[RMDB]
RNA sequence: GGGAACGACUCGAGUAGAGUCGAAAAUCACUGGACUUCGGUCCAGUGAAAAAGAAAGACGGACGCCGAACGUCAAACGCUGACGUACGAAAGUACGAAAAAAAAGUACGCCCUUCGGGGCGUACAAGAUUGAGUAGUUGUUCGCAACUACUCAAUCAAAAGAAACAACAACAACAAC
Reactivity to DMS in 0.01 (KOAc 150mM, MgCl2 10mM, bicine 150mM(pH8.5), 24C), signal-to-noise 3, nucleotides 027 to 126: u000c000a000c010u000g010g000a030c000u010u030c130g060g010u000c000c000a010g010u010g000a000a050a050a100a060g010a110a080a070g010a050c050g010g030a040c090g030c080c030g020a060a080c030g000u000c010a090a140a250c190g010c120u000g000a150c010g000u000a020c010g000a090a040a180g000u010a010c020g010a000a010a000a040a060a070a110a110g000u000a010c000g020c000c000c000u000u020c250g030g000g000g030c000g010u000a010c000a010a030
Reactivity to 2A3 in 0.01 (KOAc 150mM, MgCl2 10mM, bicine 150mM(pH8.5), 24C), signal-to-noise 3, nucleotides 027 to 126: u000c000a000c010u020g000g010a000c010u040u050c240g070g000u010c020c000a000g010u000g010a010a000a000a000a000g070a000a020a010g050a010c000g070g010a010c070g050c100c040g030a040a030c000g010u000c000a040a100a050c070g030c100u120g070a050c030g010u010a000c010g050a130a000a020g030u020a010c020g100a160a010a010a010a000a000a000a000g000u000a000c000g000c010c000c000u000u030c170g050g010g000g010c000g000u000a000c000a000a000
About this RNA:
This 177-nucleotide RNA was probed chemically with DMS and 2A3. The reactions ran in a buffer of 150 mM KOAc, 10 mM MgCl2 and 150 mM bicine (pH 8.5), at 24 C. For 2A3, 4,431 sequencing reads were counted. The DMS profile rests on 2,137 reads. Reactivities are given for positions 27 through 126. For 2A3 the reverse transcriptase was SuperScript II with manganese. DMS adducts were read by reverse transcription with MarathonRT. Reactivities are rounded to 0.1 and cut off at 0 and 3.